Structure probing data (DMS and 2A3) for a 207-nucleotide construct. The 2A3 profile rests on 5,197 reads. DMS (dimethyl sulfate) methylates the pairing face of unpaired adenines and cytosines. Values cover nucleotides 27 to 156. DMS adducts were read by reverse transcription with MarathonRT.
[RMDB]
RNA sequence: GGGAACGACUCGAGUAGAGUCGAAAACCUACUCAAUACGUCCUCGUCGUACAGAACGGUAACAUGUUUUCCGAACAUCCGCGCUUGGGUAUACGAGUAUAGACCUUACCCAACCCUCGCCAACGGGAGUGCAUCCACGAGUUCGCUCGUGGAUGAAGAAGAACCAUGAAUUCGUUCAUGGUUCUUCAAAAGAAACAACAACAACAAC
Reactivity to DMS in 0.01 (KOAc 150mM, MgCl2 10mM, bicine 150mM(pH8.5), 24C), signal-to-noise 3, nucleotides 027 to 156: c030c020u010a110c030u020c020a060a160u010a100c040g010u000c010c010u010c020g000u050c050g010u030a170c050a120g010a140a150c040g010g010u000a070a080c090a100u010g010u000u020u000u010c010c030g010a110a120c050a120u000c020c000g010c040g010c030u000u010g020g020g000u000a070u020a100c070g020a110g050u000a110u000a150g020a130c060c060u000u000a020c000c000c060a050a060c040c020c010u000c090g030c060c050a110a070c030g000g000g000a090g000u000g010c010a040u000c000c010a010c000g010a050g020u000u000c300g030c000u000c020g020u000g010g010a010u000g000a030a160
Reactivity to 2A3 in 0.01 (KOAc 150mM, MgCl2 10mM, bicine 150mM(pH8.5), 24C), signal-to-noise 6, nucleotides 027 to 156: c000c000u030a040c040u060c050a080a110u060a140c040g040u060c010c030u030c030g050u010c010g010u090a080c040a110g070a140a020c020g030g010u070a070a040c050a140u130g050u040u040u050u050c030c030g010a030a030c030a100u040c030c020g040c010g010c090u030u030g000g030g000u050a050u040a100c080g010a020g080u020a010u060a060g160a070c010c030u040u070a020c020c010c000a020a050c010c010c010u040c030g040c030c030a060a050c020g000g000g040a080g050u090g020c000a000u000c000c010a000c000g010a000g020u070u080c140g090c100u000c000g000u000g000g000a000u010g000a000a000